The record gives the reactivity of an RNA of 177 nucleotides to DMS and 2A3.
RNA sequence: GGGAACGACUCGAGUAGAGUCGAAAACAGAGCGUUAUCUUGCUUAUGCGUUAUCAACAAUUAUGUCACGUUCACUUCCUGACGUACGUGACGGACUCAAGCCUGUACAUCGUAGGUUAUUAUACGAUGACGUACCUAUCUUCGGAUAGGUACGUCAAAAAGAAACAACAACAACAAC
Reactivity to DMS in 0.01 (KOAc 150mM, MgCl2 10mM, bicine 150mM(pH8.5), 24C), signal-to-noise 3, nucleotides 027 to 126: c070a090g000a050g030c040g020u010u000a090u010c150u000u010g030c050u010u000a090u000g000c090g020u000u010a080u010c150a070a050c140a070a080u010u020a090u000g000u010c000a050c000g000u000u000c040a160c110u000u000c040c030u010g020a170c170g010u000a000c040g000u010g000a020c010g020g000a030c130u000c130a080a090g020c040c010u000g010u000a120c140a020u010c010g020u000a020g010g000u000u020a060u000u000a070u010a020c010g020a010
Reactivity to 2A3 in 0.01 (KOAc 150mM, MgCl2 10mM, bicine 150mM(pH8.5), 24C), signal-to-noise 4, nucleotides 027 to 126: c030a020g050a020g060c010g070u070u110a120u110c060u060u210g010c010u120u130a060u180g000c030g060u060u100a110u160c040a010a080c030a110a120u160u100a100u300g000u000c010a000c000g020u050u050c050a070c090u050u040c040c040u030g060a040c090g020u000a000c010g000u030g000a010c000g000g010a040c060u070c090a010a060g030c010c020u020g030u050a070c030a050u000c020g010u000a010g060g130u060u050a120u140u080a130u020a040c020g010a030

It was measured as part of the RMDB library OK2TST.
DMS adducts were read by reverse transcription with MarathonRT.
The RNA was probed in 150 mM KOAc, 10 mM MgCl2 and 150 mM bicine (pH 8.5) at 24 C.